[RMDB]
RNA sequence: GGGAACGACUCGAGUAGAGUCGAAAAAGACGGAAACCCAUCGACUGUCACCAGAUGCUGCAUCACCUGAUCACUGAUGGCUCAACGGUAUCCGGCGGUACAACUAAAUACUUGUAGCUGCCUUUUGAAAAGGAGUUCAUCUUCGGAUGAACUCCAAGGCAGUCAUUAACUUCGGUUAAUGACUGCCAAAAGAAACAACAACAACAAC
Reactivity to 2A3 in 0.01 (KOAc 150mM, MgCl2 10mM, bicine 150mM(pH8.5), 24C), signal-to-noise 2, nucleotides 027 to 156: a030g040a010c050g030g030a060a070a070c030c000c000a090u070c080g120a110c090u060g010u050c050a010c030c010a070g020a130u100g090c050u100g020c020a040u020c010a020c040c040u030g090a070u070c020a010c110u020g050a020u030g080g010c030u040c040a130a080c070g070g000u050a070u030c030c030g030g000c010g000g030u020a040c010a040a020c030u170a050a050a170u150a120c060u030u030g010u010a030g050c020u020g030c000c000u170u190u030u090g100a060a060a040a100g000g010a000g000u000u000c000a000u020c000u040u050c160g110g020a000u000g000a010a000c000u000c000c000a000a000